[RMDB]
Structure probing data (2A3 and DMS) for a 177-nucleotide construct.
It was measured as part of the RMDB library OK2TST.
Reactivities are rounded to 0.1 and cut off at 0 and 3.
The RNA was probed in 150 mM KOAc, 10 mM MgCl2 and 150 mM bicine (pH 8.5) at 24 C.
For DMS, 43,103 sequencing reads were counted.
Reactivities are given for positions 27 through 126.
RNA sequence: GGGAACGACUCGAGUAGAGUCGAAAAGGGGCCAACGCCGUGCCCAUUCAGCUUCCCGUCGGUGCGGAGGCCGACUUCGAAGGCGUCGUCGACCUGGUGGAGAUGAACGCCAAGGUGUGGCGCGGCGUCACGUCAUAUGAUUCGUCAUAUGACGUGAAAAAGAAACAACAACAACAAC
Reactivity to 2A3 in 0.01 (KOAc 150mM, MgCl2 10mM, bicine 150mM(pH8.5), 24C), signal-to-noise 9, nucleotides 027 to 126: g020g010g020g050c020c020a030a010c010g000c010c000g000u010g000c000c000c000a010u100u110c040a010g030c030u040u010c010c030c010g030u050c080g080g120u180g100c130g070g080a050g080g020c010c000g020a020c000u140u100c090g100a140a060g000g010c010g000u000c000g000u010c000g030a260c010c020u240g210g050u300g040g030a030g000a010u030g030a110a010c020g000c000c010a010a020g070g000u070g080u150g010g000c000g000c000g000g000c000g000
Reactivity to DMS in 0.01 (KOAc 150mM, MgCl2 10mM, bicine 150mM(pH8.5), 24C), signal-to-noise 9, nucleotides 027 to 126: g010g000g010g010c130c060a170a150c020g010c000c010g030u000g000c010c000c020a130u000u000c060a090g010c120u000u000c020c010c030g020u010c110g010g010u010g010c120g020g010a080g010g010c000c020g000a050c180u010u010c100g000a160a170g000g010c010g010u000c020g010u000c000g000a260c020c030u010g010g010u010g010g010a300g000a030u000g010a080a030c020g010c010c020a050a070g000g020u000g010u010g020g010c010g020c010g000g000c010g010